An RNA of 177 nucleotides, treated with 2A3 and read out base by base. Conditions: 150 mM KOAc, 10 mM MgCl2 and 150 mM bicine (pH 8.5), 24 C. The 2A3 profile rests on 351 reads.
[RMDB]
RNA sequence: GGGAACGACUCGAGUAGAGUCGAAAAAGCGGUUACGACCGCACCCGAUGCUUUCAUAUAGAUUCCGCGGGCUCAGGCUUUCGGAGAACGGUGAUGGAUUCCAUGGUCCCAUUGCCGUUUACAUAAAACAUGCUAGGUGCUUCGGCACCUAGCAUGUAAAAGAAACAACAACAACAAC
Reactivity to 2A3 in 0.01 (KOAc 150mM, MgCl2 10mM, bicine 150mM(pH8.5), 24C), signal-to-noise 1, nucleotides 027 to 126: a000g010c000g000g000u000u010a080c240g000a000c050c000g010c000a000c020c030c000g020a030u140g030c010u170u040u120c160a100u230a100u140a290g100a130u030u030c000c000g000c030g000g000g080c040u050c000a070g000g240c000u000u110u000c000g000g070a050g000a020a000c080g000g000u000g000a000u050g080g010a130u180u190c030c030a070u090g030g070u030c120c090c000a000u000u000g000c000c000g010u000u000u000a000c020a020u120a040a000a000